This 177-nucleotide RNA was probed chemically with DMS and 2A3. The RNA was probed in 150 mM KOAc, 10 mM MgCl2 and 150 mM bicine (pH 8.5) at 24 C. DMS adducts were read by reverse transcription with MarathonRT.
[RMDB]
RNA sequence: GGGAACGACUCGAGUAGAGUCGAAAAGAUAUGGAGCUGGUAGUUCAACAGCUCUGAUCGGAAACGAUCAGAGGACAUGAACAAACAGCUCCUAAGUCAAAGGUUCCGAGCUUCGGCUCGGAACCAAUCGAUUAAUAAUCUUCGGAUUAUUAAUCGAAAAAGAAACAACAACAACAAC
Reactivity to DMS in 0.01 (KOAc 150mM, MgCl2 10mM, bicine 150mM(pH8.5), 24C), signal-to-noise 2, nucleotides 027 to 126: g000a070u000a300u010g010g010a020g000c000u000g020g010u000a280g000u000u000c010a040a070c240a300g010c020u000c000u000g000a020u000c010g020g000a070a070a170c010g000a010u000c000a000g000a000g000g000a070c210a130u000g010a000a020c010a060a100a300c010a000g010c010u000c000c000u000a020a060g000u030c000a110a120a110g020g000u000u010c010c010g000a030g010c010u000u020c220g020g010c020u010c000g000g030a000a000c000c010a000a050
Reactivity to 2A3 in 0.01 (KOAc 150mM, MgCl2 10mM, bicine 150mM(pH8.5), 24C), signal-to-noise 1, nucleotides 027 to 126: g020a000u070a040u130g010g000a000g000c000u010g010g150u130a140g000u000u010c050a080a080c080a250g030c010u000c000u010g020a000u010c020g000g060a050a050a000c030g020a000u000c010a020g010a000g020g030a020c030a140u140g000a010a010c000a010a300a000c000a000g000c000u020c000c000u000a000a000g000u020c010a020a050a130g050g010u000u030c010c020g050a000g000c080u240u250c300g110g000c000u030c000g000g000a020a000c000c000a000a000
Overview: For DMS, 1,491 sequencing reads were counted. High 2A3 reactivity points to a flexible backbone, as in loops and unpaired stretches. It was measured as part of the RMDB library TTRDEL.